[RMDB]
RNA sequence: GGGAACGACUCGAGUAGAGUCGAAAAAGGUGAUUUCUCCUGCACCUUCAUCAAUGGAGGAACUCGACUUUGCUGUGGGUCCCAAAGGGACCUUAGGUGCAGACAGUUACCGGCGGUGAAGUGUGAGCAUAGGUUCGUGUCUUCGGACACGAACCAACUGUAUAUGCGGGUUCGCCCGCAUAUACAGAAAAGAAACAACAACAACAAC
Reactivity to 2A3 in 0.01 (KOAc 150mM, MgCl2 10mM, bicine 150mM(pH8.5), 24C), signal-to-noise 1, nucleotides 027 to 156: a000g090g000u040g020a110u010u040u000c030u040c030c010u110g060c010a020c010c020u100u060c000a020u010c010a010a050u140g010g010a010g010g090a010a010c010u020c050g040a050c060u040u080u030g000c040u030g010u180g020g000g010u030c010c010c000a130a150a120g000g000g000a020c100c000u010u050a060g000g000u000g010c010a000g040a200c010a020g040u030u060a040c000c010g030g000c020g020g000u030g000a000a000g040u110g070u050g110a000g040c020a100u050a190g000g000u010u000c000g000u000g000u000c020u040u090c230g100g000a000c000a000c000g010a000a000c000c000a000a010

Record summary
An RNA of 207 nucleotides, treated with 2A3 and read out base by base. The data come from the RNA Mapping Database (RMDB), library M2RFPK. The RNA was probed in 150 mM KOAc, 10 mM MgCl2 and 150 mM bicine (pH 8.5) at 24 C.